Chemical mapping of a 207-nucleotide RNA with 2A3. For 2A3 the reverse transcriptase was SuperScript II with manganese. Source: RMDB library M2RFPK, as collected in RNAgym.

RNA sequence: GGGAACGACUCGAGUAGAGUCGAAAACGUGUCCGUCGGCGUAGCCGACAACAUGCCCACGUAGCCCAGACCUUCAAGGCUACGGUGCGUUGCGACGCACGGUCUGAUUCUUCACAACGACGUUCACAAGAUCGGAUCACUUUCGAGUGAUCCGAAACGAAGGGUCACGAUUCGUCGUGACCCUUCGAAAAGAAACAACAACAACAAC
Reactivity to 2A3 in 0.01 (KOAc 150mM, MgCl2 10mM, bicine 150mM(pH8.5), 24C), signal-to-noise 1, nucleotides 027 to 156: c010g010u010g010u100c190c080g000u000c020g020g010c300g170u250a070g010c000c000g020a000c000a000a000c000a000u050g000c000c010c010a010c000g030u000a000g010c010c000c030a030g000a000c000c000u000u030c000a000a000g000g010c000u000a000c000g000g000u000g030c020g020u020u090g040c180g070a000c000g000c000a000c000g000g000u000c000u010g050a070u170u170c070u150u230c130a080c020a160a100c160g080a030c040g080u000u040c110a090c010a250a100g000a290u040c000g000g000a000u040c000a000c000u030u080u170c290g010a020g000u030g000a000u000c000c000g000a000a000a000